This 177-nucleotide RNA was probed chemically with DMS and 2A3. The DMS profile rests on 2,898 reads. For 2A3 the reverse transcriptase was SuperScript II with manganese. Conditions: 150 mM KOAc, 10 mM MgCl2 and 150 mM bicine (pH 8.5), 24 C. DMS adducts were read by reverse transcription with MarathonRT.
[RMDB]
RNA sequence: GGGAACGACUCGAGUAGAGUCGAAAAAGGGAAUAAAGUCUACGAUCGAAACAUUUGUCACCGACAAGUGAACGCUGUGAGAUGGCAGCGCCUGAGAUCGCCUCUCGCGGUGACCGAGGUCCCGUAACAGGGCAGGAGUAUUCGUACUCCUGCCCUGAAAAGAAACAACAACAACAAC
Reactivity to DMS in 0.01 (KOAc 150mM, MgCl2 10mM, bicine 150mM(pH8.5), 24C), signal-to-noise 2, nucleotides 027 to 126: a160g000g000g000a020a020u020a110a240a130g000u030c040u000a090c100g010a070u050c040g000a090a140a190c010a000u000u000u000g010u010c010a080c230c220g020a050c030a030a000g000u000g000a100a080c000g000c070u000g000u020g000a040g010a080u050g000g020c020a090g050c090g020c140c080u020g020a030g000a160u020c050g020c010c010u010c010u000c000g030c010g000g000u010g000a060c050c010g000a020g000g000u000c010c000c000g010u000a050a140
Reactivity to 2A3 in 0.01 (KOAc 150mM, MgCl2 10mM, bicine 150mM(pH8.5), 24C), signal-to-noise 3, nucleotides 027 to 126: a000g050g010g000a040a050u140a080a060a010g030u050c080u120a100c130g050a080u060c010g050a060a060a060c020a030u010u010u010g050u030c060a030c300c190g020a030c000a020a020g020u030g030a100a020c030g000c000u050g030u040g010a150g050a240u090g070g000c020a010g040c030g030c040c060u110g080a050g020a080u040c010g000c000c000u060c000u000c030g040c030g010g040u080g020a010c000c000g030a000g080g080u000c040c010c000g020u040a080a020